[RMDB]
This 207-nucleotide RNA was probed chemically with DMS and 2A3. Values cover nucleotides 27 to 156. Source: RMDB library OK3TST, as collected in RNAgym.
RNA sequence: GGGAACGACUCGAGUAGAGUCGAAAAAGUUGACUUAUCAAAGAUGAAAUCUACGCUGAAUAAGGUGGAUGAUGGAGCGAGUAUCGAUGAAGUAAGCAACGAUCUGAACGAAAUGAAAAAGAAUUCAGGUGAUGCAGCGGAAGCACUGGACGGUAUCAAUUGAUAAGGCUUUCGAGCCUUAUCAAUUAAAAGAAACAACAACAACAAC
Reactivity to DMS in 0.01 (KOAc 150mM, MgCl2 10mM, bicine 150mM(pH8.5), 24C), signal-to-noise 3, nucleotides 027 to 156: a110g010u000u000g030a120c050u010u000a060u010c050a060a120a240g020a130u020g000a030a090a180u000c020u010a060c070g010c050u000g000a080a120u000a070a080g030g020u000g000g020a080u000g010a110u000g000g000a070g020c050g030a110g030u000a070u000c070g020a140u000g000a060a100g010u000a040a060g030c050a070a120c060g020a030u000c040u010g010a030a110c090g000a110a070a060u000g000a080a060a080a060a170g020a110a080u000u000c020a040g000g020u000g020a080u010g020c040a070g020c030g020g020a100a100g010c030a060c070u010g020g000a090c000g000g020u000a110u010c090
Reactivity to 2A3 in 0.01 (KOAc 150mM, MgCl2 10mM, bicine 150mM(pH8.5), 24C), signal-to-noise 5, nucleotides 027 to 156: a000g060u050u030g020a060c020u050u040a030u130c040a080a030a020g050a040u100g070a060a070a040u020c010u050a040c070g030c120u030g050a120a080u190a150a040g040g010u030g030g010a040u050g030a030u070g020g010a030g030c070g020a030g050u030a020u070c040g020a050u060g040a060a050g030u070a020a040g010c020a000a050c010g020a030u010c040u060g030a050a040c050g040a100a050a130u140g080a060a050a040a050a020g060a020a030u050u010c020a020g000g010u040g030a040u050g020c030a010g020c020g040g000a020a000g010c020a020c050u040g030g010a020c020g020g010u050a040u180c050